Source: RMDB library OK3TST, as collected in RNAgym. Structure probing data (DMS and 2A3) for a 207-nucleotide construct. The RNA was probed in 150 mM KOAc, 10 mM MgCl2 and 150 mM bicine (pH 8.5) at 24 C. Reactivities are given for positions 27 through 156. For DMS the reverse transcriptase was MarathonRT. For DMS, 5,785 sequencing reads were counted.
[RMDB]
RNA sequence: GGGAACGACUCGAGUAGAGUCGAAAACUACACCAACAUUAUACUUAAUGUUGAAAAUGGAAUGCUUUUCGCUAAAAUCAGGAACAAGACAAGGAUAUCUUUCUCUCAGCACAUCUAUUCAGCGCUGCACUGGAAGUUAUAGUCGGUACAGUAAGAACGCAAAAUAAAAUUUCGAUUUUAUUUUGCGAAAAGAAACAACAACAACAAC
Reactivity to DMS in 0.01 (KOAc 150mM, MgCl2 10mM, bicine 150mM(pH8.5), 24C), signal-to-noise 3, nucleotides 027 to 156: c030u000a160c040a140c100c020a020a020c010a000u010u000a080u000a190c140u000u010a010a020u010g010u000u010g010a050a100a110a120u010g010g010a160a090u000g000c010u020u000u000u000c030g000c090u000a050a070a140a100u000c030a060g010g000a070a090c070a090a120g020a070c040a080a110g020g020a070u000a070u000c020u000u000u000c020u010c020u000c030a040g010c020a040c040a100u000c070u010a090u000u010c060a160g030c060g020c040u010g010c080a030c010u000g030g010a040a050g010u000u000a040u000a120g020u000c030g000g010u000a050c070a090g010u010a090a110g000a090a220
Reactivity to 2A3 in 0.01 (KOAc 150mM, MgCl2 10mM, bicine 150mM(pH8.5), 24C), signal-to-noise 7, nucleotides 027 to 156: c020u060a030c040a040c050c000a010a010c000a010u030u060a110u120a190c130u150u100a030a010u020g000u000u020g040a080a040a050a100u120g040g040a090a070u090g030c040u130u050u060u100c070g010c080u110a060a080a040a130u080c060a050g070g030a060a080c040a100a030g050a030c020a070a040g080g010a040u030a050u110c030u020u090u000c040u010c010u010c040a010g010c020a030c010a100u030c070u130a190u170u160c040a030g050c010g000c080u040g000c050a020c050u020g010g030a030a010g020u050u090a100u050a090g060u050c030g020g020u060a040c030a030g050u080a080a020g030a100a010